[RMDB]
RNA sequence: GGGAACGACUCGAGUAGAGUCGAAAAAGAAUAUAAAUGUAACAAAGUGAAUGAGCUAACGUAACAUUUGUUUUCACUUGAAGAAACAUUUGGGAUUGUCUGCAAAAAAAGUAUAUUCCUUCAUACGGCUCACCUGAUGAUUCGUCAUCAGGUGAGCAAAAGAAACAACAACAACAAC
Reactivity to 2A3 in 0.01 (KOAc 150mM, MgCl2 10mM, bicine 150mM(pH8.5), 24C), signal-to-noise 2, nucleotides 027 to 126: a000g050a010a000u290a000u020a070a040a010u090g080u220a100a000c080a060a000a000g000u030g040a050a120u130g040a010g050c060u080a080a000c070g130u050a000a050c000a060u000u000u090g050u070u000u000u000c060a060c100u050u070g120a200a100g060a010a010a000c000a000u110u000u000g000g050g010a010u000u080g140u050c030u000g000c000a020a010a000a090a270a000a000g130u260a140u100a080u010u010c020c000u030u150c020a050u230a110c030g130
Reactivity to DMS in 0.01 (KOAc 150mM, MgCl2 10mM, bicine 150mM(pH8.5), 24C), signal-to-noise 1, nucleotides 027 to 126: a060g030a140a000u030a180u000a000a000a050u030g000u020a100a190c030a120a130a070g000u010g000a000a040u050g000a130g000c020u010a060a020c150g000u070a040a090c250a090u000u000u000g020u040u010u000u000c000a010c070u010u050g000a040a010g030a130a100a100c050a010u000u000u000g000g010g000a070u030u000g000u000c170u010g000c060a000a000a000a070a130a050a020g000u000a040u000a020u000u000c060c000u000u000c100a050u000a070c150g000
Structure probing data (2A3 and DMS) for a 177-nucleotide construct.
In probing experiments dimethyl sulfate is read out at A N1 and C N3, which are open when not base-paired.
For DMS, 993 sequencing reads were counted.